[RMDB]
The record gives the reactivity of an RNA of 177 nucleotides to 2A3 and DMS.
RNA sequence: GGGAACGACUCGAGUAGAGUCGAAAACUGAAGGCUCGCGUGGCGGCCGACCUACGCCAGGUGCUGCUCGGCGGACGGUAUGCGCUGGCGAUGAUGGGCUCCGCGCCAAUCUCCGAGCAGAUGAAAGAUUUAUGAUGCUCUUCGGAGCAUCAUAAAUAAAAGAAACAACAACAACAAC
Reactivity to 2A3 in 0.01 (KOAc 150mM, MgCl2 10mM, bicine 150mM(pH8.5), 24C), signal-to-noise 4, nucleotides 027 to 126: c040u070g050a120a010g100g000c030u030c050g040c070g060u040g050g050c060g010g020c000c010g070a110c000c020u100a070c010g000c010c010a040g060g070u080g010c000u000g010c000u010c080g040g030c040g070g100a060c030g020g010u100a140u300g010c030g000c030u060g000g000c050g050a140u120g030a070u090g030g020g010c020u030c030c020g010c030g000c000c000a040a110u020c010u020c030c000g010a020g000c010a010g010a080u170g050a110a100a020g110
Reactivity to DMS in 0.01 (KOAc 150mM, MgCl2 10mM, bicine 150mM(pH8.5), 24C), signal-to-noise 3, nucleotides 027 to 126: c020u010g000a100a130g000g010c030u000c100g000c060g000u000g010g000c180g000g030c010c000g000a030c110c040u010a260c070g030c030c000a030g000g030u020g030c050u000g010c000u000c080g000g000c080g010g000a040c090g030g020u040a030u040g000c020g010c030u000g000g000c000g000a080u020g010a100u050g000g020g000c010u010c140c010g000c070g000c020c060a110a120u020c080u000c070c010g010a010g000c000a040g000a070u010g000a120a120a090g010
The RNA was probed in 150 mM KOAc, 10 mM MgCl2 and 150 mM bicine (pH 8.5) at 24 C.
The data come from the RNA Mapping Database (RMDB), library OK1LIB.